[RMDB]
RNA sequence: GGGAACGACUCGAGUAGAGUCGAAAAAUUUGUUUAGUACUAUUAAUGCUCUACCAGAAACUUCUGCCGAUAUUCUGGUGGUUGAUGAGGUUAGUAUGUGCACUAAUUAUGAUCUUUCAAUUAUUAAGCCCCUUGCACUUCGGUGCAAGGAAAAGAAACAACAACAACAAC
Reactivity to DMS in 0.01 (KOAc 150mM, MgCl2 10mM, bicine 150mM(pH8.5), 24C), signal-to-noise 3, nucleotides 027 to 129: a100u000u000u000g010u050u010u010a090g070u000a070c060u000a060u010u010a000a000u030g000c020u020c030u020a040c000c000a100g030a030a020a040c200u000u000c030u080g070c130c080g030a120u040a060u030u040c030u000g000g030u030g020g020u000u000g020a100u050g030a200g000g070u010u040a020g010u000a020u040g010u010g030c050a090c090u020a040a120u030u010a120u030g050a100u000c000u000u000u000c040a140a100u000u100a140u040u040a070a160g030c040c000
Reactivity to 2A3 in 0.01 (KOAc 150mM, MgCl2 10mM, bicine 150mM(pH8.5), 24C), signal-to-noise 3, nucleotides 027 to 129: a020u060u040u110g070u050u120u090a000g010u010a040c010u000a010u120u040a070a050u120g030c010u000c010u020a020c000c000a030g080a010a090a090c050u110u040c010u100g120c060c080g060a040u060a070u130u080c050u080g000g000u020g000g000u060u040g090a110u040g020a020g020g020u000u060a000g020u010a040u180g070u030g000c020a000c030u060a030a020u080u100a090u220g110a070u000c040u030u200u080c040a080a180u090u070a100u080u090a180a030g000c010c030

Source: RMDB library 15KLIB, as collected in RNAgym. This 170-nucleotide RNA was probed chemically with DMS and 2A3. Conditions: 150 mM KOAc, 10 mM MgCl2 and 150 mM bicine (pH 8.5), 24 C. The DMS profile rests on 10,256 reads.